[RMDB]
This 177-nucleotide RNA was probed chemically with DMS and 2A3. Conditions: 150 mM KOAc, 10 mM MgCl2 and 150 mM bicine (pH 8.5), 24 C. For 2A3, 938 sequencing reads were counted. 2A3 adducts were read by reverse transcription with SuperScript II with manganese.
RNA sequence: GGGAACGACUCGAGUAGAGUCGAAAACUAUGCAGAUUCGUCUGCAUAGAGACCCGAUGAAGCGGCUCUUACACAGCUUCAUACACGUAAGAAGUGCAAUAAAGGGACGAGGGUUCGCCCUCGUCAAUUUACACCUUCGGUUCGCCGAAGGUGUAAAAAAAGAAACAACAACAACAAC
Reactivity to DMS in 0.01 (KOAc 150mM, MgCl2 10mM, bicine 150mM(pH8.5), 24C), signal-to-noise 2, nucleotides 027 to 126: c000u000a020u000g000c000a000g000a020u000u030c170g020u000c000u010g010c000a010u000a020g000a080g020a140c000c000c010g010a050u000g000a010a030g030c010g030g010c050u010c140u010u000a100c080a100c060a100g040c020u000u000c050a000u000a130c020a010c090g000u000a110a140g020a120a150g010u000g010c110a060a130u000a040a110a090g050g010g000a010c000g000a010g000g010g010u000u010c290g010c000c000c000u000c000g000u020c000a030a010
Reactivity to 2A3 in 0.01 (KOAc 150mM, MgCl2 10mM, bicine 150mM(pH8.5), 24C), signal-to-noise 1, nucleotides 027 to 126: c000u040a010u000g000c010a010g030a050u040u130c180g190u020c070u040g000c000a020u000a000g000a010g050a030c000c000c000g020a050u080g010a000a010g000c020g040g100c040u040c080u250u220a060c150a000c010a110g000c000u030u000c000a000u010a000c020a010c040g030u030a060a090g150a170a030g070u080g070c030a010a170u180a180a080a100g070g070g000a010c010g020a000g030g000g020u040u050c110g140c020c040c000u000c010g010u000c010a000a000